Annotation:
An RNA of 177 nucleotides, treated with DMS and 2A3 and read out base by base. In probing experiments dimethyl sulfate is read out at A N1 and C N3, which are open when not base-paired. For DMS the reverse transcriptase was MarathonRT.

RNA sequence: GGGAACGACUCGAGUAGAGUCGAAAACAACUGCCUUGCCGGCCAUUCCGUUUCAAGGCGAAGCGCGCGCAGGACGGCGUCCGGGUCGGCCACGCCGCUGUCCAGCAGGCGUCGUGCGAUGUCGUCCGCUGGAAUUACCUUUCGAGGUAAUUCCAGCAAAAGAAACAACAACAACAAC
Reactivity to DMS in 0.01 (KOAc 150mM, MgCl2 10mM, bicine 150mM(pH8.5), 24C), signal-to-noise 2, nucleotides 027 to 126: c060a120a100c100u030g010c000c000u020u020g000c170c020g020g010c090c000a180u030u020c050c060g000u000u030u050c040a040a100g010g000c040g000a050a100g040c010g020c070g000c070g020c100a050g010g060a040c030g000g010c010g000u000c050c180g010g000g040u000c010g020g000c010c080a090c030g000c080c020g000c020u020g000u030c080c050a140g020c010a230g010g010c000g000u010c020g020u020g010c090g000a030u010g010u000c020g020u000c020c030
Reactivity to 2A3 in 0.01 (KOAc 150mM, MgCl2 10mM, bicine 150mM(pH8.5), 24C), signal-to-noise 4, nucleotides 027 to 126: c020a020a060c060u090g010c010c000u010u040g030c020c010g020g020c030c030a100u200u140c040c040g020u040u090u140c090a100a030g060g000c000g020a110a030g050c030g000c000g010c000g000c070a060g010g010a000c000g000g010c010g010u010c060c030g080g010g010u030c020g020g010c010c000a000c010g000c000c000g000c020u040g060u060c040c020a040g040c040a040g060g040c000g000u040c010g020u030g030c040g010a030u060g020u020c000g000u020c000c010